Conditions: 150 mM KOAc, 10 mM MgCl2 and 150 mM bicine (pH 8.5), 24 C. Chemical mapping of a 207-nucleotide RNA with 2A3 and DMS. DMS adducts were read by reverse transcription with MarathonRT. It was measured as part of the RMDB library M2RFPK. For DMS, 3,051 sequencing reads were counted.
RNA sequence: GGGAACGACUCGAGUAGAGUCGAAAAAGUUCGCGCUUCCGUGAAACGCGAAAAUCGGACGGUGGCUGCAAGUCGCAUCGCAAAACCGCGGCAAGUGGAGUUAGCGAGAGGAGACUGGGUUUUGGCUAGAACACACGGUACUUCGGUACCGUGUGAAGAACAUGAUGGAGUUCGCUCCAUCAUGUUCAAAAGAAACAACAACAACAAC
Reactivity to 2A3 in 0.01 (KOAc 150mM, MgCl2 10mM, bicine 150mM(pH8.5), 24C), signal-to-noise 2, nucleotides 027 to 156: a000g060u050u020c000g020c000g000c130u110u040c070c050g140u090g130a070a060a020c030g000c020g030a060a040a010a060u130c020g000g020a020c020g050g030u040g000g030c040u100g020c070a000a070g010u040c050g000c080a050u000c020g000c000a020a070a040a010c050c020g030c020g060g030c210a120a050g020u020g010g060a090g010u090u090a020g020c020g020a030g000a010g030g030a010g010a020c000u000g010g010g000u000u000u030u060g010g000c010u030a030g040a160a000c000a000c000a010c020g000g000u000a000c000u020u050c130g070g020u000a010c000c000g000u000g000u000g000a000a000
Reactivity to DMS in 0.01 (KOAc 150mM, MgCl2 10mM, bicine 150mM(pH8.5), 24C), signal-to-noise 2, nucleotides 027 to 156: a070g020u000u000c000g000c040g030c040u020u000c060c200g000u000g020a070a050a010c010g020c010g000a020a010a060a100u010c010g030g040a040c000g000g000u000g020g050c030u010g020c030a080a110g000u000c040g010c030a180u000c010g050c080a080a070a110a140c010c040g020c040g000g010c130a070a130g030u000g030g000a140g030u000u000a200g010c070g000a090g000a110g000g010a100g000a070c030u000g000g020g010u020u000u010u000g040g040c040u000a140g000a150a270c000a010c010a010c000g000g020u010a000c020u000u020c300g050g040u000a010c020c000g020u020g000u000g000a020a090